[RMDB]
RNA sequence: GGGAACGACUCGAGUAGAGUCGAAAAGCCCAAAGUCGCACGUGCCUGUGGGUGUCCGCUGGUUCUCAAAUGGUGAGAUUAACCGGUACGGUACAUGGAAUUAACCACUCCAGUCAUUCUUACGGCCCACGUGUUCAAAGUUCGCUUUGAACACGUGAAAAGAAACAACAACAACAAC
Reactivity to 2A3 in 0.01 (KOAc 150mM, MgCl2 10mM, bicine 150mM(pH8.5), 24C), signal-to-noise 2, nucleotides 027 to 126: g030c000c000c000a030a060a000g100u070c020g020c030a040c060g050u040g020c000c020u070g000u130g010g020g000u020g060u030c010c010g000c010u020g000g000u040u030c010u010c000a160a200a060u300g130g030u080g070a030g010a050u120u080a040a030c010c010g010g020u120a060c080g020g040u050a040c040a100u090g040g040a030a080u080u040a070a030c030c000a020c000u000c000c000a000g010u020c010a050u090u050c030u080u090a060c050g030g020c000c010
Reactivity to DMS in 0.01 (KOAc 150mM, MgCl2 10mM, bicine 150mM(pH8.5), 24C), signal-to-noise 2, nucleotides 027 to 126: g020c000c000c000a040a100a150g020u010c060g010c040a040c140g010u010g010c120c040u010g000u000g000g020g000u020g000u000c000c040g030c020u000g000g010u010u020c020u000c010a080a130a110u020g020g010u000g010a060g000a170u000u020a080a040c010c000g000g000u010a070c070g020g000u010a010c100a120u000g030g000a030a060u000u000a100a110c130c070a090c030u000c020c040a040g000u010c070a080u000u010c150u010u000a070c120g010g000c080c080

The data come from the RNA Mapping Database (RMDB), library RFMREP. The record gives the reactivity of an RNA of 177 nucleotides to 2A3 and DMS. Reactivities are given for positions 27 through 126. Conditions: 150 mM KOAc, 10 mM MgCl2 and 150 mM bicine (pH 8.5), 24 C.